[RMDB]
RNA sequence: GGGAACGACUCGAGUAGAGUCGAAAAUGAAAUGUUUGGACAUGCGGUUGACCUUGUAGUGGCAGAUGCAAGGUGUCCACCACUCCGCGAAAAGAGCAUUGAGGUUGUAGUCAUGAAUCCUCCGUUCGAGCUUAAACUCGUUCGCGAGUUUAAGCUCAAAAGAAACAACAACAACAAC
Reactivity to DMS in 0.01 (KOAc 150mM, MgCl2 10mM, bicine 150mM(pH8.5), 24C), signal-to-noise 1, nucleotides 027 to 126: u010g020a150a110a040u000g000u000u000u000g010g020a230c150a090u020g010c060g000g010u000u010g000a020c020c010u010u020g020u000a000g000u000g020g000c060a040g030a100u000g010c000a010a020g020g000u000g020u000c040c060a170c080c040a140c120u000c000c030g000c040g000a020a070a190a100g000a030g020c070a020u000u000g010a110g000g040u010u000g010u000a060g010u000c050a090u000g010a070a080u000c010c000u000c040c100g020u000u000c140